[RMDB]
RNA sequence: GGGAACGACUCGAGUAGAGUCGAAAACAGAGUUUUGCUUGUUGCCCAGGCUGGAGUGCAAUGGCGCGAUCUCGGCUCACUGCAACUUCCACCUCCCGGGUUCAACUGAUUCUCCUGCCUCAGCUGCAAGAAUCUCACUUUUCGAAGUGAGAUUCUUAAAAGAAACAACAACAACAAC
Reactivity to DMS in 0.01 (KOAc 150mM, MgCl2 10mM, bicine 150mM(pH8.5), 24C), signal-to-noise 3, nucleotides 027 to 126: c110a120g000a110g010u000u000u000u000g000c130u000u000g020u010u010g000c030c020c020a080g000g020c300u000g010g010a040g010u010g000c020a040a060u010g000g010c100g020c060g010a080u010c130u000c070g000g030c020u010c040a040c030u000g020c040a030a050c070u010u010c010c010a070c080c080u000c050c020c030g000g000g000u000u000c030a010a040c040u000g010a060u000u000c020u000c030c010u000g000c030c010u000c040a060g020c060u010g010c180
Reactivity to 2A3 in 0.01 (KOAc 150mM, MgCl2 10mM, bicine 150mM(pH8.5), 24C), signal-to-noise 2, nucleotides 027 to 126: c020a030g070a040g080u010u040u140u160g050c030u100u080g030u080u110g030c040c010c040a010g050g000c080u030g020g020a020g020u050g000c020a040a120u030g100g000c130g000c040g220a250u090c110u060c140g080g010c040u040c030a020c000u020g000c010a080a210c040u170u050c010c010a010c000c010u100c060c080c010g070g000g000u040u070c050a040a010c020u010g010a060u040u000c020u050c020c020u050g040c000c020u110c060a090g060c040u070g000c040